[RMDB]
RNA sequence: GGGAACGACUCGAGUAGAGUCGAAAAGAUAUGGAGAACCCAGACAUGCCUAAGUCGGAAACGAUGAUGGGCAACAGCUGGAGUUCUCCUAAGUCAAAACUGAUAGACCCUUCGGGGUCUAUCAGAACAUUAUUUAAGACUUCGGUCUUAAAUAAUGAAAAGAAACAACAACAACAAC
Reactivity to 2A3 in 0.01 (KOAc 150mM, MgCl2 10mM, bicine 150mM(pH8.5), 24C), signal-to-noise 2, nucleotides 027 to 126: g010a000u020a020u060g000g000a000g010a000a000c000c020c000a020g040a050c130a150u180g010c000c000u040a040a010g000u020c000g030g020a020a010a010c020g010a000u080g020a080u280g000g010g080c040a100a080c110a070g030c000u020g020g030a290g050u000u000c000u000c010c000u000a020a000g010u010c010a030a000a150a250c000u000g000a010u000a000g020a000c000c000c000u000u060c300g040g000g020g000u000c000u030a000u010c000a000g000a000a000
Reactivity to DMS in 0.01 (KOAc 150mM, MgCl2 10mM, bicine 150mM(pH8.5), 24C), signal-to-noise 4, nucleotides 027 to 126: g010a040u000a170u010g000g000a020g000a010a000c000c000c010a010g000a060c100a160u010g010c010c000u000a150a300g000u000c000g020g000a050a040a070c010g010a020u000g000a190u020g000g000g020c000a050a060c270a120g000c000u000g000g000a170g000u000u000c000u000c000c000u010a000a070g010u010c020a110a090a090a190c000u010g000a030u000a000g000a020c000c000c000u000u010c210g030g000g000g010u000c000u000a000u000c000a000g000a070a110